[RMDB]
RNA sequence: GGGAACGACUCGAGUAGAGUCGAAAAUUCCAAUUCCAUUUGCCGAAAUGUGAACAAUAGGGCAGAGUGCUCUUGUGCGCCAGGAAUGUUUGGAGCACCACCGAACUGUCGACCUGAAUGUGUGAUAACUCCCAUUAUACUUCGGUAUAAUGGGAGUAAAAGAAACAACAACAACAAC
Reactivity to DMS in 0.01 (KOAc 150mM, MgCl2 10mM, bicine 150mM(pH8.5), 24C), signal-to-noise 8, nucleotides 027 to 126: u000u000c010c020a140a190u010u000c040c020a050u000u000u000g020c080c080g000a030a060a050u000g010u010g010a080a070c140a080a090u010a090g000g000g010c040a100g010a130g010u010g010c030u000c050u000u000g030u000g010c040g020c030c020a050g000g000a110a080u000g010u000u010u000g010g010a070g010c030a030c050c070a040c040c030g010a030a060c050u000g010u000c050g010a090c060c040u000g010a080a080u000g010u000g020u000g000a100u010a120
Reactivity to 2A3 in 0.01 (KOAc 150mM, MgCl2 10mM, bicine 150mM(pH8.5), 24C), signal-to-noise 4, nucleotides 027 to 126: u020u000c010c000a000a070u130u040c030c000a020u050u020u100g070c050c020g070a050a040a080u130g040u110g040a070a030c060a060a140u080a140g030g000g010c020a020g020a030g110u100g020c020u000c000u110u110g100u070g030c030g000c020c000a030g010g120a240a100u140g100u110u080u060g040g000a030g000c000a010c050c010a010c000c030g030a050a030c040u030g030u060c050g030a110c030c010u050g070a170a090u110g060u030g030u020g110a040u040a110